Chemical mapping of a 207-nucleotide RNA with 2A3 and DMS. Reactivities are given for positions 27 through 156. The reactions ran in a buffer of 150 mM KOAc, 10 mM MgCl2 and 150 mM bicine (pH 8.5), at 24 C. High 2A3 reactivity points to a flexible backbone, as in loops and unpaired stretches. For 2A3 the reverse transcriptase was SuperScript II with manganese. The 2A3 profile rests on 6,844 reads.
RNA sequence: GGGAACGACUCGAGUAGAGUCGAAAAGAGAAGGGUUUAUCAUCUGUUACUCUAUCACGGAUCGUCGAAGUUUCCAUGAAGUUCGUGAGUUUAAACAGCUUAUUUAUCGAGUCCGACGUACUGACGAUACACCUGUGGUUCUUGUGGGAAACAAGUCAAACCAAACAUUAUUCGUAAUGUUUGGUUUAAAAGAAACAACAACAACAAC
Reactivity to 2A3 in 0.01 (KOAc 150mM, MgCl2 10mM, bicine 150mM(pH8.5), 24C), signal-to-noise 8, nucleotides 027 to 156: g110a000g030a070a060g060g020g010u060u070u060a050u050c030a010u020c010u010g060u090u050a040c030u040c060u110a120u170c030a010c050g020g010a040u050c050g070u040c060g130a080a060g050u090u130u030c040c020a060u180g050a070a020g050u060u060c050g010u060g040a050g020u050u040u150a130a140a020c030a020g030c030u080u040a070u150u210u070a110u140c020g010a010g060u000c030c030g030a040c040g060u060a030c020u030g030a020c010g010a010u010a040c040a020c020c000u060g020u070g090g050u050u040c020u020u040g010u040g020g000g050a000a070a020c020a030a020g080u130c080
Reactivity to DMS in 0.01 (KOAc 150mM, MgCl2 10mM, bicine 150mM(pH8.5), 24C), signal-to-noise 7, nucleotides 027 to 156: g010a120g010a130a140g000g010g030u000u000u000a060u010c050a070u000c020u000g010u000u000a070c050u000c040u000a100u000c030a090c040g010g000a200u000c020g010u000c040g020a050a100g020u000u010u000c030c030a120u010g020a300a080g010u000u000c040g010u000g010a080g020u010u000u000a080a070a080c110a050g010c040u000u000a090u010u000u000a100u010c020g010a090g020u000c030c010g000a130c170g010u000a050c030u000g000a070c030g010a110u000a040c060a080c040c020u000g020u000g020g000u000u000c030u000u000g010u000g000g000g010a120a080a100c030a040a100g010u010c160